[RMDB]
The record gives the reactivity of an RNA of 177 nucleotides to DMS and 2A3. In probing experiments dimethyl sulfate is read out at A N1 and C N3, which are open when not base-paired. Reactivities are given for positions 27 through 126. It was measured as part of the RMDB library OK1LIB.
RNA sequence: GGGAACGACUCGAGUAGAGUCGAAAAUGAUGUGCGUGACUGCGAAGCGGUCGAUAGGUGUGGUAAGGCCGGAAUCCACAUUUAUCGUUUGUGCUAUGUCCGGCCAAAUAGCACGUGCACAUCUAAAGGGAACGACGAGGUUCGCUUCGUCGUUCCCAAAAGAAACAACAACAACAAC
Reactivity to DMS in 0.01 (KOAc 150mM, MgCl2 10mM, bicine 150mM(pH8.5), 24C), signal-to-noise 2, nucleotides 027 to 126: u000g000a000u030g000u000g000c000g040u030g060a030c010u010g010c020g000a170a070g040c000g040g030u000c000g020a150u020a020g010g030u000g030u010g030g010u020a160a290g000g000c000c000g050g000a040a010u070c300c020a060c030a020u030u000u050a040u120c200g080u060u010u000g000u000g000c080u000a020u000g000u000c030c010g000g010c000c010a010a030a050u030a140g000c010a000c020g000u020g000c020a000c000a000u000c000u000a010a080a140
Reactivity to 2A3 in 0.01 (KOAc 150mM, MgCl2 10mM, bicine 150mM(pH8.5), 24C), signal-to-noise 3, nucleotides 027 to 126: u160g000a000u020g000u000g010c010g040u040g050a030c010u010g030c070g130a210a040g040c020g010g020u040c010g010a050u070a080g060g000u000g000u020g020g060u110a090a170g020g000c000c000g000g000a000a040u040c020c000a000c010a000u030u040u040a170u030c090g040u010u020u120g030u020g010c080u030a030u150g120u040c000c010g000g000c000c000a080a030a000u040a010g010c000a000c020g030u070g000c000a000c000a000u000c000u030a040a010a010